[RMDB]
RNA sequence: GGGAACGACUCGAGUAGAGUCGAAAAGAUAUGGACUGCGACGAAUGCUCUUGGAUUUAACACAAGACCAGUAUAUCGGAAACGAUAUACGUGAGUGUUUGUCAGAGCACGUCGCAGUCCUAAGUCAGACGGUAUAUUUGUUCGCAAAUAUACCGUCAAAAGAAACAACAACAACAAC
Reactivity to DMS in 0.01 (KOAc 150mM, MgCl2 10mM, bicine 150mM(pH8.5), 24C), signal-to-noise 4, nucleotides 027 to 126: g010a070u000a300u000g000g010a020c000u000g000c000g000a000c000g010a150a140u010g010c000u000c010u010u010g050g030a010u020u010u010a010a010c000a000c000a000a280g000a300c180c050a130g030u000a000u000a010u000c000g010g000a170a070a260c000g000a010u000a000u000a000c010g000u000g010a140g000u000g000u010u000u000g000u000c000a030g000a010g020c010a070c000g010u000c010g000c010a000g000u000c000c000u000a020a080g010u000c100a170
Reactivity to 2A3 in 0.01 (KOAc 150mM, MgCl2 10mM, bicine 150mM(pH8.5), 24C), signal-to-noise 2, nucleotides 027 to 126: g060a040u120a050u040g000g000a000c000u010g010c000g010a010c020g100a300a120u150g000c000u010c030u110u180g260g020a110u300u300u240a060a000c000a010c020a050a080g170a150c120c020a040g010u000a010u010a010u030c000g020g000a070a030a030c020g010a000u000a000u010a000c000g010u020g030a030g010u000g030u000u000u030g000u000c020a000g000a000g020c000a010c010g000u000c010g000c000a030g020u000c000c000u010a000a020g000u020c030a020
The record gives the reactivity of an RNA of 177 nucleotides to DMS and 2A3. It was measured as part of the RMDB library TTRINS. 2A3 adducts were read by reverse transcription with SuperScript II with manganese. For DMS the reverse transcriptase was MarathonRT.